Source: RMDB library OK3TST, as collected in RNAgym. An RNA of 207 nucleotides, treated with 2A3 and DMS and read out base by base. Reactivities are given for positions 27 through 156. The DMS profile rests on 1,799 reads. The reactions ran in a buffer of 150 mM KOAc, 10 mM MgCl2 and 150 mM bicine (pH 8.5), at 24 C.

[RMDB]
RNA sequence: GGGAACGACUCGAGUAGAGUCGAAAAUUUCUAACAAACAACCAACAAUUCUUAUCUACAUGAAUCAUGAGCACAUCCAAGGCAACCGCAACCUACUUGAGAUCCAUUAUGCUUCCCGAGAAUGGGCCAGCAAGCAUUCCGGACGACAUAACAGAGAACAUUAUCUUCGGUUCGCCGAAGAUAAUGUAAAAGAAACAACAACAACAAC
Reactivity to 2A3 in 0.01 (KOAc 150mM, MgCl2 10mM, bicine 150mM(pH8.5), 24C), signal-to-noise 3, nucleotides 027 to 156: u040u020u040c030u090a060a040c020a040a120a030c030a060a060c020c030a020a080c040a120a190u130u010c080u130u130a130u050c030u110a080c050a120u150g080a090a010u080c020a080u100g030a010g000c020a020c010a070u050c030c020a030a050g030g000c020a010a020c010c010g010c040a050a020c000c010u040a020c000u050u040g030a020g010a070u040c010c020a050u080u090a050u100g010c000u010u060c020c010c010g110a150g040a100a060u060g000g060g000c000c030a050g040c030a080a010g040c010a010u060u000c010c010g040g020a040c030g010a010c040a020u080a040a040c040a030g060a000g070a140
Reactivity to DMS in 0.01 (KOAc 150mM, MgCl2 10mM, bicine 150mM(pH8.5), 24C), signal-to-noise 1, nucleotides 027 to 156: u010u000u000c030u000a210a190c080a110a100a120c050a110a110c050c010a040a110c050a040a080u000u000c060u010u000a100u000c020u000a010c040a040u010g000a100a060u010c090a080u000g000a140g000c030a080c040a090u010c040c050a050a090g020g020c030a040a050c050c040g000c010a070a080c020c000u000a100c040u000u000g010a080g000a100u000c010c040a100u010u000a060u000g030c040u010u000c060c000c040g020a150g020a050a040u000g020g020g040c070c010a080g000c070a070a170g030c020a010u000u010c050c020g010g020a110c000g000a010c010a060u000a040a060c040a040g010a220g040a150